[RMDB]
RNA sequence: GGGAACGACUCGAGUAGAGUCGAAAAAUGAGAUCGCUCCUUCUCUCGGGGAAGGACGUGGUUGCCUUCAUCGGUCCUCACAUCUCCCGGACGGCCAUCCCUGCCGGAGGGGUGGCGGAGAGCCUGGCGGAGCUGAUAGAUUCGUCUAUCAGCUCCGAAAAGAAACAACAACAACAAC
Reactivity to DMS in 0.01 (KOAc 150mM, MgCl2 10mM, bicine 150mM(pH8.5), 24C), signal-to-noise 2, nucleotides 027 to 126: a060u010g000a130g020a050u000c020g000c050u000c010c010u010u000c010u000c030u010c200g020g000g000g000a040a020g000g000a020c120g040u000g010g000u010u000g010c070c030u000u000c110a080u000c160g010g000u010c080c020u010c060a060c090a090u000c090u000c010c000c040g000g000a110c100g000g000c000c020a030u000c010c000c000u000g010c120c110g000g000a120g020g010g030g040u000g000g030c020g000g010a080g010a070g020c030c040u010g030g010
Reactivity to 2A3 in 0.01 (KOAc 150mM, MgCl2 10mM, bicine 150mM(pH8.5), 24C), signal-to-noise 1, nucleotides 027 to 126: a000u140g010a040g020a060u080c020g000c080u010c020c000u000u000c020u000c050u100c100g300g070g040g000a000a020g030g010a020c080g030u060g030g030u060u120g050c000c020u060u020c030a060u050c070g080g030u030c020c000u010c010a060c000a120u080c090u050c040c000c000g010g110a070c020g060g000c000c000a040u000c020c020c000u010g070c040c070g070g070a040g040g000g020g000u000g000g000c030g040g000a050g000a020g040c000c080u100g070g100